Structure probing data (DMS and 2A3) for a 177-nucleotide construct. 2A3 is a SHAPE reagent: it acylates the 2'-hydroxyl of flexible nucleotides of all four kinds. The data come from the RNA Mapping Database (RMDB), library OK2TRN.
RNA sequence: GGGAACGACUCGAGUAGAGUCGAAAAUCGGCGCGAGACGCCGUGGCCGCCCUGGCCGAUCGUGGUCUGCGCACCAUGCUGUUGACCGGUGACAAUCCCGAAUCGGCGGCGGCCGUGGCUACUCGCGGUGUAGACGCGAGUUCGCUCGCGUCUACACAAAAGAAACAACAACAACAAC
Reactivity to DMS in 0.01 (KOAc 150mM, MgCl2 10mM, bicine 150mM(pH8.5), 24C), signal-to-noise 3, nucleotides 027 to 126: u000c070g000g000c010g020c000g020a030g020a130c300g000c010c000g010u000g010g010c020c000g020c010c020c300u000g050g000c000c000g000a010u000c030g020u020g000g000u000c100u000g010c100g020c020a020c000c040a090u000g000c110u000g010u000u000g020a110c200c200g010g000u010g000a070c030a060a040u020c000c030c010g010a090a030u000c010g020g030c000g000g010c000g020g000c010c000g030u000g010g010c000u010a300c020u000c000g030c000g020
Reactivity to 2A3 in 0.01 (KOAc 150mM, MgCl2 10mM, bicine 150mM(pH8.5), 24C), signal-to-noise 4, nucleotides 027 to 126: u080c010g080g030c010g000c000g010a020g020a020c070g000c010c010g010u010g010g000c000c000g010c020c020c080u140g240g010c010c010g010a000u000c000g060u220g030g030u090c160u080g060c100g020c270a000c010c000a070u290g040c120u190g130u300u210g090a180c030c090g000g030u010g000a030c020a010a020u080c000c000c010g020a070a150u020c010g010g000c000g000g000c010g010g000c000c000g000u010g000g000c000u020a030c010u010c000g010c000g000